About this RNA: Chemical mapping of a 207-nucleotide RNA with 2A3 and DMS. Values cover nucleotides 27 to 156. For 2A3, 1,026 sequencing reads were counted. The RNA was probed in 150 mM KOAc, 10 mM MgCl2 and 150 mM bicine (pH 8.5) at 24 C. 2A3 adducts were read by reverse transcription with SuperScript II with manganese. DMS (dimethyl sulfate) methylates the pairing face of unpaired adenines and cytosines. Values are in units of 0.01, from 0 to 300, in steps of 10. For DMS, 1,869 sequencing reads were counted.

RNA sequence: GGGAACGACUCGAGUAGAGUCGAAAAACGCAAAUAAAAAAGCAGGAUUCAUUGGGCAAAUUGCAGGGUAUGCCAUUGUAUUUAAUAAGCCAAGUGUGCCUAAUGCACCUUUUAUUGAAUAUAUCGCUCCGACGGCACUUGAUAAUGUCGAUUUAAAAUACCAUCAGGGAUUCGUCCCUGAUGGUAUAAAAGAAACAACAACAACAAC
Reactivity to 2A3 in 0.01 (KOAc 150mM, MgCl2 10mM, bicine 150mM(pH8.5), 24C), signal-to-noise 2, nucleotides 027 to 156: a000c050g020c050a080a120a070u240a080a050a020a030a010a010g010c020a020g030g020a050u090u040c020a010u060u200g030g000g010c030a070a030a050u170u060g010c010a020g000g000g020u120a010u080g020c010c010a020u010u090g000u000a010u010u030u030a040a050u030a030a010g080c050c070a040a000g060u080g000u010g170c030c070u150a120a060u220g010c010a010c000c000u060u100u010u040a050u030u050g010a050a000u040a000u000a010u070c040g020c060u050c050c030g060a060c010g020g000c030a030c030u060u150g060a110u090a190a010u020g000u000c020g010a020u090u240u300a020a160a010
Reactivity to DMS in 0.01 (KOAc 150mM, MgCl2 10mM, bicine 150mM(pH8.5), 24C), signal-to-noise 1, nucleotides 027 to 156: a100c080g020c060a080a030a240u010a030a060a060a090a110a170g020c030a090g000g020a060u020u010c050a150u010u010g040g020g060c010a050a020a060u000u050g010c070a080g030g020g060u000a070u010g030c000c050a080u010u000g020u000a030u010u010u010a040a060u000a030a010g020c130c080a020a090g030u070g040u010g010c000c030u000a120a090u010g040c000a050c010c000u000u000u050u000a010u000u020g030a040a020u000a050u010a120u000c050g030c050u000c000c000g020a110c050g020g000c020a020c060u000u000g020a140u000a060a040u000g000u000c020g020a180u000u000u000a070a060a170